[RMDB]
RNA sequence: GGGAACGACUCGAGUAGAGUCGAAAAGAAAGAAAGAAAGCUGACCCUUCUGCUGACGGAUCUUGUGGAGCACCACAGUGCAGAAGGGGAGAGAAGCCUUAAUGCCGACCGUCUGGGCAGCCUUGAAAAAACGGAUUCUUCUUCGGAAGAAUCCGAACACGUUCAUAUUGUUCGCAAUAUGAACGUGAAAAGAAACAACAACAACAAC
Reactivity to 2A3 in 0.01 (KOAc 150mM, MgCl2 10mM, bicine 150mM(pH8.5), 24C), signal-to-noise 2, nucleotides 027 to 156: g080a020a020a000g080a040a070a020g050a060a120a010g050c030u050g090a110c000c000c000u000u000c000u000g010c040u040g030a050c010g070g010a090u100c080u200u100g000u030g010g050a120g160c100a080c140c010a010c010a020g040u030g010c000a000g000a010a000g000g000g020g000a000g000a000g010a020a000g000c010c000u060u060a070a060u070g010c000c010g000a050c010c000g010u020c020u040g050g010g000c000a020g030c000c030u040u110g020a060a060a000a000a030a020c010g010g000a000u000u000c000u000u000c000u010u040c150g050g000a000a000g010a000a000u030c000c000g000a000a010
Reactivity to DMS in 0.01 (KOAc 150mM, MgCl2 10mM, bicine 150mM(pH8.5), 24C), signal-to-noise 1, nucleotides 027 to 156: g000a100a060a130g010a100a120a130g020a120a070a050g000c090u020g000a180c020c000c010u000u010c000u020g000c000u000g020a200c120g010g010a080u000c050u020u010g000u000g030g020a220g010c200a040c050c010a040c010a020g030u000g000c010a040g000a020a000g000g000g020g000a060g020a120g000a100a080g010c050c010u020u000a020a100u000g020c030c020g020a090c020c070g000u000c070u040g000g010g070c010a070g010c030c030u000u000g000a000a030a030a040a070a140c010g030g020a060u000u010c000u000u000c000u020u000c300g030g000a020a020g000a000a010u000c000c010g000a010a070
Annotation: Chemical mapping of a 207-nucleotide RNA with 2A3 and DMS. For 2A3, 1,847 sequencing reads were counted. The DMS profile rests on 2,480 reads. For DMS the reverse transcriptase was MarathonRT. The RNA was probed in 150 mM KOAc, 10 mM MgCl2 and 150 mM bicine (pH 8.5) at 24 C. 2A3 adducts were read by reverse transcription with SuperScript II with manganese.